[RMDB]
RNA sequence: GGGAACGACUCGAGUAGAGUCGAAAAGGUCUUUGCACCCGUGCACCUGCUGAAGGGUCUCUGGAGCUUUGGCUUUUUGGCUUUUACGAGUAAAGCUGCCGUGGUGCUUGGUGUGCGGUGAGGAGUGGACAGAAGGCUCUGUCCUGGCAGGUGCCCACAUAAUGGUGGGGUUCGCCCCACCAUUAUGAAAAGAAACAACAACAACAAC
Reactivity to 2A3 in 0.01 (KOAc 150mM, MgCl2 10mM, bicine 150mM(pH8.5), 24C), signal-to-noise 2, nucleotides 027 to 156: g040g020u070c050u070u140u190g020c110a010c010c050c020g040u060g020c010a000c000c000u000g010c020u070g070a040a050g000g000g000u000c000u000c030u070g040g010a030g020c000u090u060u050g020g000c000u030u030u020u110u130g050g020c020u130u030u020u230a100c160g090a080g020u130a040a060a020g000c030u020g050c050c030g020u070g030g010u080g070c040u040u060g070g000u050g040u070g050c010g000g000u080g050a040g050g030a070g010u100g020g100a000c000a000g100a140a100g080g000c050u040c010u040g130u140c030c100u040g020g000c010a010g010g000u000g000c000c000c000a040
Reactivity to DMS in 0.01 (KOAc 150mM, MgCl2 10mM, bicine 150mM(pH8.5), 24C), signal-to-noise 1, nucleotides 027 to 156: g000g010u010c010u000u010u010g010c070a000c020c000c010g030u020g030c010a020c000c000u010g000c000u000g020a300a140g030g010g010u000c060u000c050u000g020g010a300g020c020u000u000u020g030g000c000u000u010u020u060u000g030g000c040u000u000u020u000a300c110g010a200g010u000a050a060a070g040c030u000g010c070c030g020u000g030g030u000g000c050u000u010g010g020u000g000u000g020c010g000g020u000g020a150g010g000a140g010u000g000g000a160c020a050g010a110a140g020g010c050u000c010u000g000u000c030c050u000g020g030c030a050g010g020u000g020c070c020c010a090
Structure probing data (2A3 and DMS) for a 207-nucleotide construct. Reactivities are given for positions 27 through 156. The data come from the RNA Mapping Database (RMDB), library OK3TST.